[RMDB]
RNA sequence: GGGAACGACUCGAGUAGAGUCGAAAAAUCGGAUGAUUCGUCAUCCGAUGCGAAUGGGCUAUAGCCAAGCGGUAAGGCAAGGGACUUUGACUCCCUCAUGCGCCGGUUCGAAUCCUGCUAGCCCAACCAGACAGACGGCGAGAUUCGUCUCGCCGAACAUUUUGCCACUGUUCGCAGUGGCAAAAUGAAAAGAAACAACAACAACAAC
Reactivity to DMS in 0.01 (KOAc 150mM, MgCl2 10mM, bicine 150mM(pH8.5), 24C), signal-to-noise 2, nucleotides 027 to 156: a080u000c000g000g020a010u000g000a010u000u000c300g010u010c000a000u010c020c000g000a000u010g000c110g020a060a160u000g010g040g030c000u020a080u000a160g000c070c060a110a110g050c010g020g020u010a030a220g000g090c030a120a060g020g010g020a000c090u020u000u010g000a170c170u000c000c000c000u000c010a050u010g000c020g020c040c020g000g000u000u000c040g000a300a060u000c040c010u060g030c070u000a070g000c000c010c010a060a260c040c070a170g000a180c060a070g010a190c070g000g000c020g000a020g010a060u000u000c300g010u000c000u000c010g100c000c040g000a020a050
Reactivity to 2A3 in 0.01 (KOAc 150mM, MgCl2 10mM, bicine 150mM(pH8.5), 24C), signal-to-noise 2, nucleotides 027 to 156: a000u010c000g000g020a000u000g000a010u020u100c220g050u000c060a000u020c000c000g000a000u020g000c020g120a120a090u080g010g000g010c000u010a010u020a030g020c020c000a010a020g040c050g140g300u140a040a000g010g000c000a000a000g020g000g010a010c120u180u240u270g090a190c030u010c010c040c000u010c040a090u300g000c000g010c010c010g000g000u000u000c000g010a010a010u020c000c000u000g000c010u010a010g000c000c000c000a000a010c010c000a010g110a080c030a070g080a070c000g000g000c040g000a010g000a030u080u150c190g040u030c100u000c000g040c000c000g000a000a000

Description
The record gives the reactivity of an RNA of 207 nucleotides to DMS and 2A3. Conditions: 150 mM KOAc, 10 mM MgCl2 and 150 mM bicine (pH 8.5), 24 C. Reactivities are rounded to 0.1 and cut off at 0 and 3. High 2A3 reactivity points to a flexible backbone, as in loops and unpaired stretches.